Structure probing data (2A3) for a 207-nucleotide construct.
2A3 is a SHAPE reagent: it acylates the 2'-hydroxyl of flexible nucleotides of all four kinds.
It was measured as part of the RMDB library OK3TST.
2A3 adducts were read by reverse transcription with SuperScript II with manganese.
[RMDB]
RNA sequence: GGGAACGACUCGAGUAGAGUCGAAAAGAGCAGGUGAAAGGAGAGCAGAAGGUCAGAGAGAUUGUUUCCUGAGGCCUAACCCAUCAAUUUAAUAAGACUGUAAUAAGGGCUAUGGGAGCUGUGAGCCAGGAACUAUGGAUGAAAACUUGUAUAUAGACGAUGAUAGGAUCUUCGGAUCCUAUCAUCGAAAAGAAACAACAACAACAAC
Reactivity to 2A3 in 0.01 (KOAc 150mM, MgCl2 10mM, bicine 150mM(pH8.5), 24C), signal-to-noise 1, nucleotides 027 to 156: g020a000g040c000a000g090g030u080g080a090a060a010g110g020a090g000a020g060c010a010g070a060a020g030g000u060c030a000g060a010g000a000g030a080u140u000g040u010u090u000c010c010u030g040a080g140g000c000c000u010a070a090c030c010c020a050u070c030a070a050u030u000u300a210a120u150a130a040g090a120c040u000g020u040a030a020u040a070a080g000g030g010c000u020a010u040g020g020g000a050g060c080u070g040u090g080a050g020c030c020a000g000g020a000a010c000u050a120u180g070g000a030u050g040a000a040a000a130c040u030u040g080u010a050u000a020u000a140g050a050